Structure probing data (2A3) for a 207-nucleotide construct. Conditions: 150 mM KOAc, 10 mM MgCl2 and 150 mM bicine (pH 8.5), 24 C. For 2A3 the reverse transcriptase was SuperScript II with manganese. The data come from the RNA Mapping Database (RMDB), library OK3TST.
RNA sequence: GGGAACGACUCGAGUAGAGUCGAAAAUGAUGAUUCAGAAGCGAAUCGGACAGUCUGCUGAGGGAGACAAAGCAUGGCUUCGUUAUGUUGCUGAGGAUGGUAAGAUUCAUGGUUCUGUUAACCCUAAUGGAGCAGUUACGGGUCGUGCGACCCAUGCCACGCGUAUGCAGUUCGCUGCAUACGCGUGAAAAGAAACAACAACAACAAC
Reactivity to 2A3 in 0.01 (KOAc 150mM, MgCl2 10mM, bicine 150mM(pH8.5), 24C), signal-to-noise 1, nucleotides 027 to 156: u150g000a010u070g030a030u100u000c110a050g070a290a000g130c020g040a000a070u020c000g100g000a010c010a090g080u080c040u030g040c020u010g000a110g010g000g000a100g030a010c030a120a000a000g050c030a060u080g000g000c040u040u000c030g000u130u040a040u080g090u100u080g030c090u060g000a060g140g000a020u100g020g080u060a000a010g030a100u030u140c060a170u070g080g040u070u140c010u000g000u030u080a130a100c000c000c000u060a200a080u130g000g000a160g000c000a000g030u190u040a050c040g040g000g000u000c090g010u030g140c020g000a020c060c000c000a000u030g000c010